[RMDB]
RNA sequence: GGGAACGACUCGAGUAGAGUCGAAAACUUGUGAUCCGAGUGGAGACAACAAGAUGUUGGAACUAUGGGCCGAUCUCAUUAGGCCGGGUUCGGGUUGGCUAUUCACUGGCCUGCCCAUUCCAAGUCGGGAGUUGAGGGUUCGGGCUCGAGCGAAGGCGCUAAAGAUACUCUUCGGAGUAUCUUUAGCAAAAGAAACAACAACAACAAC
Reactivity to 2A3 in 0.01 (KOAc 150mM, MgCl2 10mM, bicine 150mM(pH8.5), 24C), signal-to-noise 2, nucleotides 027 to 156: c010u030u050g060u110g130a050u060c010c000g030a090g070u180g000g040a090g030a030c040a070a000c030a060a090g050a140u090g080u050u030g030g010a050a030c000u020a260u300g030g030g030c000c000g030a060u010c120u050c150a130u150u140a060g070g000c000c050g000g000g000u040u050c010g000g000g000u010u030g010g000c010u040a070u200u200c080a060c290u100g010g000c010c000u020g000c000c000c020a000u080u000c020c000a020a030g120u020c020g030g010g060a110g020u120u100g040a040g020g030g010u020u060c020g080g120g000c000u030c040g010a020g010c020g030a050a020g080g030c070
Reactivity to DMS in 0.01 (KOAc 150mM, MgCl2 10mM, bicine 150mM(pH8.5), 24C), signal-to-noise 1, nucleotides 027 to 156: c030u010u010g030u010g010a180u100c000c000g040a130g040u000g000g000a180g000a130c040a030a000c040a020a100g010a070u000g000u000u000g060g000a070a050c030u000a120u020g030g010g030c020c000g020a090u000c110u000c110a140u000u000a070g030g010c020c030g000g020g030u000u000c050g040g030g020u000u010g020g020c020u000a080u010u000c170a110c180u000g030g010c000c000u000g000c000c000c010a130u010u020c010c000a040a090g000u010c040g020g000g000a120g020u000u020g010a170g030g000g000u000u010c020g050g000g020c000u000c010g000a050g000c030g030a110a050g000g060c140